The record gives the reactivity of an RNA of 207 nucleotides to 2A3 and DMS. The RNA was probed in 150 mM KOAc, 10 mM MgCl2 and 150 mM bicine (pH 8.5) at 24 C. The DMS profile rests on 6,841 reads. It was measured as part of the RMDB library M2RFPK. For DMS the reverse transcriptase was MarathonRT. 2A3 adducts were read by reverse transcription with SuperScript II with manganese.

[RMDB]
RNA sequence: GGGAACGACUCGAGUAGAGUCGAAAACGUGUCCGUCAGCGUAGCCGACAACAUGCCCAGGUAGCCCAGACCUUCAAGGCUACGGUGCGUUGCGACGCACGGUCUGAUUCUUCACAACGACGUUCACAAGAUCGGAUCACUUUCGAGUGAUCCGAAAAGGUAGAGUAGUUUUCGAACUACUCUACCUAAAAGAAACAACAACAACAAC
Reactivity to 2A3 in 0.01 (KOAc 150mM, MgCl2 10mM, bicine 150mM(pH8.5), 24C), signal-to-noise 7, nucleotides 027 to 156: c040g000u020g010u060c070c060g030u040c020a020g000c040g130u170a070g040c030c010g020a070c030a100a010c020a080u120g020c000c010c040a020g010g030u020a020g020c000c040c060a040g020a030c000c010u030u070c080a040a020g000g010c000u010a010c000g000g020u020g000c000g000u020u060g070c130g070a010c000g010c000a000c000g000g000u020c020u030g030a050u110u080c050u140u130c080a060c030a180a080c100g100a020c050g070u050u080c070a040c030a150a070g050a200u030c010g000g000a000u000c000a000c010u030u070u050c060g000a010g020u010g000a000u000c000c000g010a000a000a000
Reactivity to DMS in 0.01 (KOAc 150mM, MgCl2 10mM, bicine 150mM(pH8.5), 24C), signal-to-noise 3, nucleotides 027 to 156: c060g030u000g000u000c010c030g040u000c000a070g040c030g040u000a090g030c010c020g020a130c060a110a030c050a100u000g010c020c010c050a120g060g020u000a050g000c010c020c110a120g010a080c050c000u010u020c130a060a240g020g020c000u000a040c010g010g030u010g010c020g000u000u010g030c150g030a130c020g010c020a050c010g000g000u000c020u000g000a170u000u000c060u020u000c070a120c070a060a150c040g020a110c020g010u000u000c020a050c040a080a120g000a190u010c020g010g010a010u000c000a010c010u000u000u000c260g000a030g030u000g000a000u000c000c000g000a000a000a050